The record gives the reactivity of an RNA of 207 nucleotides to 2A3 and DMS. It was measured as part of the RMDB library M2RFPK. In probing experiments dimethyl sulfate is read out at A N1 and C N3, which are open when not base-paired. DMS adducts were read by reverse transcription with MarathonRT.

RNA sequence: GGGAACGACUCGAGUAGAGUCGAAAAGUCCAAAAUUGAUUCGGCGGCCCUGUCAUGAGGCCGAAACGAAGGCACGUACCCCUUCGAAUAGCGUCGGGGAGUCAGCGGCUAUAUAUGCGCCUAAUGCUAAAGUCGUGCUGGUUCGCCAGCACGACAAGUAUGGUUUAAGGUUCGCCUUAAACCAUACAAAAGAAACAACAACAACAAC
Reactivity to 2A3 in 0.01 (KOAc 150mM, MgCl2 10mM, bicine 150mM(pH8.5), 24C), signal-to-noise 3, nucleotides 027 to 156: g050u020c010c010a040a010a020a100u160u200g030a050u050u040c030g030g000c010g020g000c100c020c010u060g160u140c110a160u140g070a060g040g000c000c000g000a020a000a000c030g020a020a020g040g000c040a010c130g070u100a070c010c000c010c000u010u020c010g070a130a180u170a120g110c020g020u010c020g010g030g010g010a020g080u070c020a020g030c010g040g000c030u020a010u020a020u010a010u270g060c020g020c010c030u100a070a040u110g050c050u090a180a040a010g000u000c000g000u010g000c000u010g000g020u040u010c110g050c060c000a000g000c000a010c000g000a000c010a000a000
Reactivity to DMS in 0.01 (KOAc 150mM, MgCl2 10mM, bicine 150mM(pH8.5), 24C), signal-to-noise 2, nucleotides 027 to 156: g000u000c020c010a020a070a110a100u000u000g030a240u000u010c010g020g070c020g000g010c000c000c010u000g030u010c230a120u010g010a030g010g000c020c020g000a010a060a160c050g000a030a070g020g020c020a120c080g020u020a210c010c030c010c020u000u000c020g050a120a220u000a060g030c110g020u000c070g000g020g010g020a090g020u000c050a110g010c050g010g030c000u000a080u000a160u000a070u010g010c070g000c000c030u000a070a130u010g000c040u000a070a080a180g030u000c000g010u000g010c000u000g000g020u000u000c300g020c000c000a010g020c010a000c010g030a010c000a000a030